[RMDB]
RNA sequence: GGGAACGACUCGAGUAGAGUCGAAAAGUCGUUGCAUCGGGUGCUGUUGCCUUAAGCAUGUGUAUAUGGGGUUCGGGGGCUGUUGCCAUGAUAUAUAUGGAUGAGACAGAAGUGGCCCCGUUGACGAAUACUCUCCUCCAUUCGUGGAGGAGAGUAUAAAAGAAACAACAACAACAAC
Reactivity to 2A3 in 0.01 (KOAc 150mM, MgCl2 10mM, bicine 150mM(pH8.5), 24C), signal-to-noise 2, nucleotides 027 to 126: g020u030c040g010u000u020g080c000a110u030c000g000g000g030u120g060c050u070g060u120u110g000c000c000u060u120a100a070g020c040a060u100g060u000g120u090a000u030a080u260g010g000g000g000u000u260c030g020g040g000g050g000c020u040g030u050u020g050c000c000a010u040g180a020u120a000u010a000u010a020u140g010g000a010u080g100a050g040a050c020a050g050a110a020g130u150g040g050c000c000c010c000g000u010u070g000a010c020g060a060
Reactivity to DMS in 0.01 (KOAc 150mM, MgCl2 10mM, bicine 150mM(pH8.5), 24C), signal-to-noise 4, nucleotides 027 to 126: g000u020c050g010u000u010g000c050a050u000c050g000g010g010u000g000c060u000g020u010u000g030c040c030u000u020a080a140g020c060a030u010g020u020g010u030a040u030a060u030g010g010g000g000u000u010c110g010g000g000g010g020c010u010g000u020u010g000c010c010a000u000g030a110u050a120u020a060u030a040u000g010g000a110u020g030a200g020a050c050a030g000a120a090g010u010g000g020c000c020c010c000g000u000u010g000a090c100g010a140
An RNA of 177 nucleotides, treated with 2A3 and DMS and read out base by base. The RNA was probed in 150 mM KOAc, 10 mM MgCl2 and 150 mM bicine (pH 8.5) at 24 C. For 2A3 the reverse transcriptase was SuperScript II with manganese. The data come from the RNA Mapping Database (RMDB), libraries RFM100 and RFMREP.